RNA sequence: GGGAACGACUCGAGUAGAGUCGAAAAUUGGUGACGAUACGGGUUGCCCUGGUGCAUGCCGUGACGCCCGUGACCCAAUGCCACCGCUAGCAAGCCAAACGAGGUGCGUGUAUGACUACGGCGAUACCUGAUCCUCUUGUUUCGACAAGAGGAUCAGAAAAGAAACAACAACAACAAC
Reactivity to 2A3 in 0.01 (KOAc 150mM, MgCl2 10mM, bicine 150mM(pH8.5), 24C), signal-to-noise 3, nucleotides 027 to 126: u050u030g020g020u030g050a060c060g030a040u040a150c020g030g020g050u030u220g000c030c000c050u140g020g040u100g060c120a100u260g130c000c020g020u020g010a020c010g000c010c000c040g000u020g040a030c030c000c000a020a030u040g030c030c020a030c000c040g020c060u040a030g010c030a140a020g000c000c040a110a100a060c110g050a110g000g030u050g010c030g000u040g040u030a090u180g090a070c030u040a030c110g000g050c030g040a030u090a090c020
Reactivity to DMS in 0.01 (KOAc 150mM, MgCl2 10mM, bicine 150mM(pH8.5), 24C), signal-to-noise 4, nucleotides 027 to 126: u010u010g000g000u000g020a070c100g010a150u000a040c010g000g000g020u010u010g030c010c030c090u000g040g020u010g010c160a070u020g040c010c010g020u000g000a030c030g010c010c000c050g030u000g000a160c070c010c020a070a070u000g000c030c000a040c040c050g000c080u000a080g020c090a090a110g040c040c070a040a080a110c150g000a130g010g020u010g010c120g020u030g010u000a040u010g010a040c060u010a030c110g010g010c040g000a090u000a070c160

An RNA of 177 nucleotides, treated with 2A3 and DMS and read out base by base. 2A3 adducts were read by reverse transcription with SuperScript II with manganese. For DMS the reverse transcriptase was MarathonRT.